[RMDB]
RNA sequence: GGGAACGACUCGAGUAGAGUCGAAAACUUGAGGUGUGGAUUCCUGAUGGCGGUCGUGCUAUGUCGAUCGGGUGUCCGCGCUAAGUCGGGCGUCAAUAUGGUGCCUUAAGAGGAGUCUCGAGUCACCAGGUUGGUUAAAGAGGAGCGUACCGGCCCACCUAACUACGGGGUUCGCCCCGUAGUUAGGAAAAGAAACAACAACAACAAC
Reactivity to 2A3 in 0.01 (KOAc 150mM, MgCl2 10mM, bicine 150mM(pH8.5), 24C), signal-to-noise 1, nucleotides 027 to 156: c020u050u090g120a040g070g060u030g000u040g050g030a060u050u020c020c020u050g020a000u000g040g090c020g050g140u120c030g090u160g050c220u240a050u260g020u020c040g100a030u000c020g000g000g000u040g000u000c000c000g040c000g060c040u070a010a000g080u080c040g010g020g010c000g000u020c030a110a070u060a030u300g000g000u010g000c000c000u010u020a030a000g000a010g070g000a180g130u030c000u000c010g030a040g000u020c000a000c000c000a000g050g000u090u090g040g050u080u120a100a130a000g080a060g070g050a090g050c100g000u070a150c040c000g040g000c010c000c000a010
The record gives the reactivity of an RNA of 207 nucleotides to 2A3. Source: RMDB library ARCHII, as collected in RNAgym. Reactivities are rounded to 0.1 and cut off at 0 and 3. The 2A3 profile rests on 591 reads.